[RMDB]
RNA sequence: GGGAACGACUCGAGUAGAGUCGAAAACACAAGCCAGGGCGGAUCUCUCCCGCAGGACGUAUGAACGUGAAGCCAGUCUGUUUCAGCAAGGCGUGACACCGCGCCAGGAAAUGGAAUCAGCCAAAGCGGCACUGGAGGUCGCGCAGGCCGAGGCGCACAUGUCACCCAUUUUCGAAUGGGUGACAUGAAAAGAAACAACAACAACAAC
Reactivity to DMS in 0.01 (KOAc 150mM, MgCl2 10mM, bicine 150mM(pH8.5), 24C), signal-to-noise 1, nucleotides 027 to 156: c010a060c040a070a110g000c030c030a080g040g030g120c040g000g080a040u000c150u000c040u000c040c000c020g000c040a110g000g030a050c010g020u000a150u000g010a040a100c100g080u000g000a150a180g000c000c020a100g000u000c040u000g000u010u000u010c020a130g000c070a100a110g010g000c050g020u030g010a070c190a190c180c000g000c010g000c000c000a220g020g000a050a100a010u010g010g020a100a050u000c000a020g000c010c010a020a120a250g010c020g030g030c010a110c140u010g010g010a120g050g030u020c010g010c040g020c060a260g000g010c020c000g000a130g030g010c020g000c050a190
Reactivity to 2A3 in 0.01 (KOAc 150mM, MgCl2 10mM, bicine 150mM(pH8.5), 24C), signal-to-noise 1, nucleotides 027 to 156: c060a000c010a010a020g090c020c030a030g040g010g060c020g060g000a040u010c010u000c010u010c060c000c000g000c030a030g000g060a020c020g040u030a120u250g100a240a010c000g030u020g060a050a010g080c040c010a000g060u000c020u030g010u000u000u060c040a080g130c060a190a000g060g000c020g020u000g060a190c030a030c080c040g000c000g000c000c000a010g030g000a030a070a030u120g000g000a020a090u220c050a030g000c000c000a000a230a070g000c000g010g000c080a030c080u220g170g040a130g010g020u010c000g000c000g010c150a000g030g000c020c000g000a040g030g040c020g040c000a070